The record gives the reactivity of an RNA of 207 nucleotides to DMS and 2A3.
[RMDB]
RNA sequence: GGGAACGACUCGAGUAGAGUCGAAAAGGCCUUGCUGGACAUGGGGCCCUGGCGUCUGUCUGGGUGUGAGCCUCAGUUCUGCACUCUGCUCUCUGGGCAACUAGGCAAGUCAUGUAACCUCACUGUGCCUGCUUUCUCCUCAGUAAAACGGUGAUGAGUACUAUAAAAACUUCGGUUUUUAUAGUACAAAAGAAACAACAACAACAAC
Reactivity to DMS in 0.01 (KOAc 150mM, MgCl2 10mM, bicine 150mM(pH8.5), 24C), signal-to-noise 2, nucleotides 027 to 156: g030g000c040c030u000u000g030c050u000g000g000a120c050a090u010g030g030g040g020c020c020c030u010g030g010c040g010u000c060u010g000u000c060u020g010g030g030u000g000u010g010a120g000c000c040u000c020a100g010u000u010c020u030g000c050a080c050u010c070u010g000c010u010c050u010c030u000g030g020g030c020a050a110c030u000a100g000g040c010a120a070g020u000c060a080u000g020u000a140a090c040c020u000c040a040c040u000g000u000g000c070c000u000g020c060u010u000u000c010u010c030c020u020c050a070g030u000a030a090a110a100c060g020g020u000g010a080u000g010a300
Reactivity to 2A3 in 0.01 (KOAc 150mM, MgCl2 10mM, bicine 150mM(pH8.5), 24C), signal-to-noise 4, nucleotides 027 to 156: g070g010c010c000u030u060g000c030u040g020g020a020c010a200u030g010g000g010g000c000c000c010u020g020g010c060g130u180c220u220g060u070c030u030g020g020g040u100g080u120g140a050g010c010c010u040c010a010g000u050u040c020u030g000c010a030c030u070c050u040g010c010u000c000u000c040u100g010g000g010c030a070a050c030u050a030g010g010c040a060a020g050u050c060a050u110g060u160a080a070c010c020u010c020a030c030u030g030u080g050c000c010u020g000c050u030u080u010c030u020c020c000u070c020a040g030u150a030a120a040a060c040g030g030u050g030a060u090g030a020
For DMS the reverse transcriptase was MarathonRT. Source: RMDB library OK3TST, as collected in RNAgym.